[RMDB]
RNA sequence: GGGAACGACUCGAGUAGAGUCGAAAAUCUAGUUCCUGGUUCGCCAGGAACUAGAAAAACGCGGGAAUGCCGAAAACCGUGGAAAAGAGUAGGCUAAAAGUACAUGCAAUCUUCGGAUUGCAUGUACCACUGUAAUCCUGUUCGCAGGAUUACAGUGAAAAGAAACAACAACAACAAC
Reactivity to 2A3 in 0.01 (KOAc 150mM, MgCl2 10mM, bicine 150mM(pH8.5), 24C), signal-to-noise 3, nucleotides 027 to 126: u010c000u000a000g000u000u000c010c000u000g030g040u040u050c180g040c040c000a000g010g000a000a000c000u000a000g000a000a000a000a000a000c040g010c000g000g010g020a100a140u300g010c000c010g060a000a000a010a000c020c000g030u200g190g220a020a020a020a000g020a000g000u030a010g000g010c000u010a040a030a000a030g000u000a010c000a000u010g000c000a010a000u000c000u030u080c190g100g000a000u020u000g000c000a000u000g000u010a000c010
Reactivity to DMS in 0.01 (KOAc 150mM, MgCl2 10mM, bicine 150mM(pH8.5), 24C), signal-to-noise 2, nucleotides 027 to 126: u010c000u000a000g000u000u000c000c000u000g000g000u000u020c220g010c010c000a010g000g000a000a000c000u000a000g000a010a040a040a130a140c160g010c010g010g020g000a060a130u000g010c010c000g000a210a120a100a010c000c000g000u000g010g020a050a010a060a080g000a020g010u000a150g000g000c010u010a050a050a060a150g010u000a000c000a000u000g000c000a010a000u000c000u000u010c240g000g000a010u000u000g000c000a000u000g000u000a000c010

An RNA of 177 nucleotides, treated with 2A3 and DMS and read out base by base. The reactions ran in a buffer of 150 mM KOAc, 10 mM MgCl2 and 150 mM bicine (pH 8.5), at 24 C. The DMS profile rests on 2,856 reads. DMS (dimethyl sulfate) methylates the pairing face of unpaired adenines and cytosines. For DMS the reverse transcriptase was MarathonRT.